[RMDB]
RNA sequence: GGGAACGACUCGAGUAGAGUCGAAAAGGGUUCUACGCAACGAAAACCCACGAACCCUGUCAGGUCCGGAAGGAAGCAGCAGUAAGUGGCCCCUUUCGUGUGCCGUAGAGUCGCUGGGCCGAGCUAACUGCUCAGGUAACGCUAGGGUGGCAUGAUCGAAUAGAUAUCACUUCGGUGAUAUCUAUUCAAAAGAAACAACAACAACAAC
Reactivity to DMS in 0.01 (KOAc 150mM, MgCl2 10mM, bicine 150mM(pH8.5), 24C), signal-to-noise 5, nucleotides 027 to 156: g030g010g020u000u000c010u000a050c030g040c010a080a110c030g000a060a030a040a130c100c000c020a090c020g000a110a080c030c020c000u000g010u010c090a100g030g020u010c010c010g010g040a190a150g030g020a110a190g020c030a080g000c060a050g010u010a050a300g030u000g000g000c010c030c050c050u000u000u000c020g010u000g040u020g040c040c040g020u000a040g000a040g010u000c030g000c020u000g010g000g030c030c040g000a090g020c030u000a080a080c150u010g010c000u000c030a070g020g010u010a050a070c070g000c030u010a090g010g010g030u000g000g010c040a100u000g000a120u000c110
Reactivity to 2A3 in 0.01 (KOAc 150mM, MgCl2 10mM, bicine 150mM(pH8.5), 24C), signal-to-noise 7, nucleotides 027 to 156: g030g000g000u020u000c000u000a010c010g010c020a020a000c010g010a010a010a010a010c010c010c000a010c010g020a010a060c060c020c000u000g030u070c020a030g000g010u000c000c010g060g140a120a080g030g000a010a010g000c010a000g010c000a000g010u070a120a030g000u030g020g000c010c000c010c010u010u010u010c070g010u190g140u070g080c130c020g000u010a000g000a000g020u020c010g000c030u020g000g020g010c020c020g020a010g000c030u070a070a090c080u130g000c000u010c040a080g070g010u060a120a030c060g020c130u080a040g030g040g000u050g050g000c110a090u140g030a120u220c110
Structure probing data (DMS and 2A3) for a 207-nucleotide construct. Conditions: 150 mM KOAc, 10 mM MgCl2 and 150 mM bicine (pH 8.5), 24 C. DMS adducts were read by reverse transcription with MarathonRT. 2A3 adducts were read by reverse transcription with SuperScript II with manganese. The 2A3 profile rests on 9,716 reads.